[RMDB]
An RNA of 177 nucleotides, treated with DMS and 2A3 and read out base by base. DMS adducts were read by reverse transcription with MarathonRT.

RNA sequence: GGGAACGACUCGAGUAGAGUCGAAAAGCGUUCGUUUAUUUGUUUGGUCCCUGUGUGUUGGUAAAUGAAAUAAACUGGGCGGUGAUUUCUGUAGCUUUUAUAGGUGUAUAGGGGUCAGAAUCGAGCGGGAUAUAUAUUAAUUCGUUAAUAUAUAUCCAAAAGAAACAACAACAACAAC
Reactivity to DMS in 0.01 (KOAc 150mM, MgCl2 10mM, bicine 150mM(pH8.5), 24C), signal-to-noise 3, nucleotides 027 to 126: g010c030g030u010u000c050g010u020u000u010a010u010u010u010g000u010u000u010g010g010u010c000c000c000u020g020u020g000u010g020u010u010g000g000u020a030a070a080u020g000a030a050a030u020a020a030a040c050u010g010g020g030c030g000g000u010g000a050u000u010u020c010u010g010u010a080g010c050u010u020u010u020a110u030a080g000g010u010g020u010a030u010a030g000g000g020g020u000c010a030g000a070a050u000c070g020a110g010c120g000
Reactivity to 2A3 in 0.01 (KOAc 150mM, MgCl2 10mM, bicine 150mM(pH8.5), 24C), signal-to-noise 2, nucleotides 027 to 126: g040c020g010u040u010c030g020u040u010u070a100u040u080u130g100u080u010u030g080g030u050c010c000c000u020g040u030g010u000g000u060u140g040g020u100a020a060a020u180g060a020a060a030u080a010a020a010c050u020g020g030g000c000g010g050u050g020a080u010u130u030c020u050g050u070a050g000c000u020u050u050u050a150u140a090g050g010u090g020u070a020u030a050g010g010g010g030u020c020a050g060a090a060u060c030g020a000g040c100g000

For 2A3 the reverse transcriptase was SuperScript II with manganese. For 2A3, 805 sequencing reads were counted.